The data come from the RNA Mapping Database (RMDB), library OK3TST.
Chemical mapping of a 207-nucleotide RNA with 2A3 and DMS.
The 2A3 profile rests on 1,021 reads.

RNA sequence: GGGAACGACUCGAGUAGAGUCGAAAACUCAAAUCUUUCUCCUUUCCCCAUUAUUAAAGCAAGUGAAUGUGUGUGAUGACUCCUACCCACCUCAAGUGUUUCCGAGGAGGCAAGGGCAACCCUGGAGGGAAGGGAAGCACAUGCAGGUAGCAGAGUAAAGAUGAUAAACCUUCGGGUUUAUCAUCUUAAAAGAAACAACAACAACAAC
Reactivity to 2A3 in 0.01 (KOAc 150mM, MgCl2 10mM, bicine 150mM(pH8.5), 24C), signal-to-noise 2, nucleotides 027 to 156: c070u060c030a110a120a120u100c080u050u220u060c060u130c040c020u070u050u030c040c020c000c010a040u070u110a020u020u050a050a030a000g020c020a040a000g030u010g250a110a100u060g060u000g010u010g010u000g030a090u070g030a040c050u040c020c020u030a060c000c000c010a160c050c000u010c020a060a040g040u030g040u140u080u050c070c030g010a090g010g030a030g000g030c050a070a030g030g000g010c010a010a020c070c000c010u020g090g010a040g040g000g010a000a060g050g000g010a030a010g000c010a000c000a000u000g040c030a000g050g040u020a020g010c000a000g030a020g080u150a150
Reactivity to DMS in 0.01 (KOAc 150mM, MgCl2 10mM, bicine 150mM(pH8.5), 24C), signal-to-noise 1, nucleotides 027 to 156: c050u000c050a050a040a050u000c060u000u000u000c020u000c020c030u010u000u000c000c000c000c000a060u000u000a040u000u000a000a030a040g010c030a040a070g030u000g050a040a060u000g020u010g010u000g040u000g050a060u010g030a140c040u000c050c030u000a060c020c000c000a110c030c020u020c020a090a120g030u010g010u000u000u000c060c040g020a120g030g000a050g040g040c010a060a100g000g030g000c040a070a110c040c010c020u010g050g030a110g030g010g010a200a080g040g010g000a070a070g000c030a010c000a040u000g050c030a000g020g020u020a050g000c020a060g000a100g040u000a080